[RMDB]
RNA sequence: GGGAACGACUCGAGUAGAGUCGAAAAUCUGCGUAUCCCCAACUCACAGACGGUCUCUCUAAGCUGGUAGAUCGAAAACCUAAAUACGAACAACUUAAGUUCUGUCGUAGUGGCUCCUAAUAUCCAAUCUUACGGGGGGAUUCGUCCCCCCGUAAGAAAAAGAAACAACAACAACAAC
Reactivity to 2A3 in 0.01 (KOAc 150mM, MgCl2 10mM, bicine 150mM(pH8.5), 24C), signal-to-noise 2, nucleotides 027 to 126: u040c040u090g000c010g000u040a190u110c000c000c000c020a040a080c000u010c030a070c020a000g120a060c050g030g000u020c000u000c010u010c020u090a050a080g030c010u020g050g030u090a040g020a030u050c040g060a120a080a000a080c000c070u090a020a020a000u150a010c030g050a090a010c050a040a050c000u160u270a180a020g020u000u030c060u060g070u030c020g000u020a040g020u040g080g000c020u000c020c010u110a090a070u070a070u150c050c000a080a090
Reactivity to DMS in 0.01 (KOAc 150mM, MgCl2 10mM, bicine 150mM(pH8.5), 24C), signal-to-noise 1, nucleotides 027 to 126: u000c000u000g040c030g000u000a120u000c040c000c020c040a100a100c110u000c120a050c080a080g050a120c060g010g060u000c000u000c000u000c060u000a030a050g000c020u020g000g000u010a010g030a090u010c030g000a050a030a160a100c060c010u000a020a060a080u080a120c110g000a020a010c020a080a080c100u000u030a100a140g010u010u000c010u000g010u000c050g030u000a010g000u000g080g000c030u010c010c000u000a150a020u030a090u010c040c030a060a150
About this RNA: An RNA of 177 nucleotides, treated with 2A3 and DMS and read out base by base. Conditions: 150 mM KOAc, 10 mM MgCl2 and 150 mM bicine (pH 8.5), 24 C. The data come from the RNA Mapping Database (RMDB), library RFM100. The DMS profile rests on 1,481 reads. DMS adducts were read by reverse transcription with MarathonRT. Reactivities are given for positions 27 through 126.